Structure probing data (2A3) for a 177-nucleotide construct. For 2A3, 771 sequencing reads were counted. High 2A3 reactivity points to a flexible backbone, as in loops and unpaired stretches. Conditions: 150 mM KOAc, 10 mM MgCl2 and 150 mM bicine (pH 8.5), 24 C.
RNA sequence: GGGAACGACUCGAGUAGAGUCGAAAAAGCGGAGUACGCUCCGCAAGGAGGAGAGGGUCCUGGAGAAGCGUGGACGGCUCCAGGUGGGUUCUGGCAGGUCCUCACCCUCUCUAGGCCCCAUUCUCAACCAGCACGCUAUGUUCGCAUAGCGUGCUGGAAAAGAAACAACAACAACAAC
Reactivity to 2A3 in 0.01 (KOAc 150mM, MgCl2 10mM, bicine 150mM(pH8.5), 24C), signal-to-noise 1, nucleotides 027 to 126: a050g000c000g000g010a000g000u080a010c290g000c040u000c010c000g020c020a000a020g080g000a000g010g030a030g040a140g000g020g000u010c000c020u030g000g020a020g000a100a000g000c010g050u070g020g060a170c100g000g010c020u000c020c000a010g070g000u110g020g180g000u090u060c030u030g030g000c070a060g000g080u120c000c000u000c000a000c000c000c000u020c000u000c000u000a010g000g000c010c010c000c010a030u020u030c010u000c010a030a030